[RMDB]
RNA sequence: GGGAACGACUCGAGUAGAGUCGAAAAUACUACGCGGCCUCCCACCUCACUGCCCGGAGCCGGCCGCCCGCCCAGAGACCCGGCCGGCUCCCACCGUCGCUUGGUCGACGACCCGCCGCGCCAACAAGCUAGAAUCUAGAUUCGUCUAGAUUCUAGCAAAAGAAACAACAACAACAAC
Reactivity to DMS in 0.01 (KOAc 150mM, MgCl2 10mM, bicine 150mM(pH8.5), 24C), signal-to-noise 1, nucleotides 027 to 126: u000a070c050u010a090c070g000c050g020g020c010c040u000c030c030c000a200c120c040u010c060a020c060u010g000c040c070c090g000g030a040g000c030c000g000g030c000c000g050c050c030c050g000c050c030c040a180g010a100g000a070c110c160c030g030g000c010c000g000g010c010u010c000c000c010a080c180c030g000u000c050g020c040u010u000g010g010u000c000g010a030c020g000a110c050c060c020g020c020c020g010c020g010c020c060a070a040c140a080a110